Conditions: 150 mM KOAc, 10 mM MgCl2 and 150 mM bicine (pH 8.5), 24 C. The record gives the reactivity of an RNA of 207 nucleotides to 2A3. 2A3 adducts were read by reverse transcription with SuperScript II with manganese.
RNA sequence: GGGAACGACUCGAGUAGAGUCGAAAACUUCUGCCAUCGUCAUGCCUCUGCUUUGCCUGCUGGCUCCUGGCAUGAGACUGCUCUACCUGGACACGUAUAGAAUCACUCUCAUCAUCGUCGGCAUUUGCAGCCUGAUAGGGGAGCGCCGUAGGGUGGCGUGCAAUGCUCAGUUCGCUGAGCAUUGCACAAAAGAAACAACAACAACAAC
Reactivity to 2A3 in 0.01 (KOAc 150mM, MgCl2 10mM, bicine 150mM(pH8.5), 24C), signal-to-noise 1, nucleotides 027 to 156: c010u150u000c070u080g000c000c020a060u030c000g080u060c000a020u010g070c040c000u090c030u060g200c110u030u020u200g040c010c040u220g070c140u260g020g000c020u070c000c000u000g010g030c000a050u000g010a000g080a040c030u100g000c000u030c000u060a300c000c010u080g130g000a060c080a000c070g180u150a100u070a160g100a050a070u120c000a060c030u010c010u130c030a130u000c000a030u030c060g060u010c060g080g030c080a010u040u050u260g000c030a070g020c000c000u060g080a050u100a040g000g010g000g020a010g000c000g010c010c010g000u010a000g110g000g070u040g020g000c000
For 2A3, 432 sequencing reads were counted.
The data come from the RNA Mapping Database (RMDB), library OK3TST.
2A3 is a SHAPE reagent: it acylates the 2'-hydroxyl of flexible nucleotides of all four kinds.